[RMDB]
RNA sequence: GGGAACGACUCGAGUAGAGUCGAAAAAGCGCUCCGAGCAGAUGGGGCUGGACCCGGCUACUGGGCCACUUUCUGGUGCUGCUGCGCAGGCCGUGGACAGUGGCGCAACUGACCAGUUGGUGCAGCAACAUAUCUGAUUGUUCGCAAUCAGAUAUGUAAAAGAAACAACAACAACAAC
Reactivity to 2A3 in 0.01 (KOAc 150mM, MgCl2 10mM, bicine 150mM(pH8.5), 24C), signal-to-noise 5, nucleotides 027 to 126: a000g060c050g000c010u000c010c010g050a070g040c080a040g050a180u220g030g000g030g010c000u060g050g100a070c000c020c000g040g020c040u110a040c020u040g060g190g050c010c010a020c010u080u130u050c050u060g070g050u160g220c020u030g010c020u060g060c040g000c040a010g040g000c020c030g060u110g020g000a020c010a030g010u010g020g020c060g000c050a040a070c050u060g040a090c010c010a090g030u110u120g110g000u070g000c030a030g020c000a030
Reactivity to DMS in 0.01 (KOAc 150mM, MgCl2 10mM, bicine 150mM(pH8.5), 24C), signal-to-noise 9, nucleotides 027 to 126: a090g010c090g010c020u000c030c020g010a160g020c120a100g010a100u010g010g010g000g000c040u000g020g000a110c020c010c020g010g000c020u000a040c060u000g000g010g010c020c010a020c040u000u000u010c030u010g010g020u010g020c030u000g000c070u010g010c140g020c020a040g000g000c050c050g010u010g010g010a080c070a020g010u000g010g010c020g010c080a050a070c070u000g010a130c030c030a110g020u010u000g020g010u000g000c030a040g010c100a140